An RNA of 177 nucleotides, treated with DMS and 2A3 and read out base by base. The 2A3 profile rests on 845 reads. 2A3 adducts were read by reverse transcription with SuperScript II with manganese. The data come from the RNA Mapping Database (RMDB), library OK2TST. Values cover nucleotides 27 to 126.
RNA sequence: GGGAACGACUCGAGUAGAGUCGAAAAAAUCAGGUGCCUGAGGAUAACGUGUAUGUGAACUCGAUGCACACAUCAUGUUCCCUCACUAUAUCUGAGUGCACUUUCGAAACACCUUCCAUGAUGCUGGGCAGCCUCUAUGGUUCGCCAUAGAGGCUGCAAAAGAAACAACAACAACAAC
Reactivity to DMS in 0.01 (KOAc 150mM, MgCl2 10mM, bicine 150mM(pH8.5), 24C), signal-to-noise 1, nucleotides 027 to 126: a060a080u000c040a000g000g010u000g000c030c080u000g000a190g000g030a010u000a020a140c300g020u000g000u000a040u000g000u010g000a050a000c000u040c170g010a060u000g010c170a170c250a200c020a040u000c000a040u000g000u010u000c070c010c040u000c020a000c010u000a280u000a010u000c010u000g000a300g010u000g000c030a040c000u000u000u030c150g000a030a000a130c160a090c000c020u000u000c040c030a050u040g000a080u000g010c090u000g000g000
Reactivity to 2A3 in 0.01 (KOAc 150mM, MgCl2 10mM, bicine 150mM(pH8.5), 24C), signal-to-noise 1, nucleotides 027 to 126: a000a000u070c020a020g000g000u000g040c000c020u030g020a040g050g020a020u010a040a000c010g000u000g040u180a020u100g110u080g000a020a000c010u040c200g040a040u090g060c140a040c050a020c010a150u070c000a020u070g010u040u020c000c000c000u010c000a000c000u060a070u000a000u160c050u040g040a030g000u090g070c020a000c000u060u070u080c140g050a100a110a000c070a050c060c060u090u080c000c000a090u200g020a030u110g130c020u060g080g000